[RMDB]
The record gives the reactivity of an RNA of 177 nucleotides to DMS and 2A3. 2A3 adducts were read by reverse transcription with SuperScript II with manganese. DMS adducts were read by reverse transcription with MarathonRT. Source: RMDB library OK1LIB, as collected in RNAgym. For 2A3, 1,594 sequencing reads were counted.
RNA sequence: GGGAACGACUCGAGUAGAGUCGAAAACGUACCGACGACAAGCAGCGCCGCGACGAUGAGUCCCCAAAGCGCAACCGGCCCUGGAUUGGCAAGUGUGGCGCGUAUACUCGUGUCCACGGCAGAAACCGACUCAGCACUGAUUCGUCAGUGCUGAGUCAAAAGAAACAACAACAACAAC
Reactivity to DMS in 0.01 (KOAc 150mM, MgCl2 10mM, bicine 150mM(pH8.5), 24C), signal-to-noise 1, nucleotides 027 to 126: c170g000u000a050c010c090g030a080c060g090a010c200a170a090g020c000a110g000c170g000c120c010g170c300g030a050c000g000a040u000g000a290g000u000c000c000c000c000a070a160a120g000c060g000c080a060a000c020c110g000g000c000c060c200u000g000g000a010u090u050g030g020c010a000a140g060u000g000u000g060g000c000g000c000g000u000a090u000a030c290u000c050g000u040g000u000c000c080a080c030g000g000c010a020g020a140a070a120c110c030
Reactivity to 2A3 in 0.01 (KOAc 150mM, MgCl2 10mM, bicine 150mM(pH8.5), 24C), signal-to-noise 3, nucleotides 027 to 126: c070g020u040a060c050c010g040a040c000g040a010c120a190a000g000c070a040g000c100g020c050c000g030c050g020a080c030g020a060u110g030a000g090u080c000c030c000c040a060a130a050g090c010g030c000a000a030c010c010g060g020c010c000c000u090g070g020a130u130u170g080g000c080a200a130g030u060g030u030g120g000c000g000c000g030u000a040u030a060c080u050c040g020u020g020u000c040c010a010c010g040g060c020a010g170a030a040a000c030c020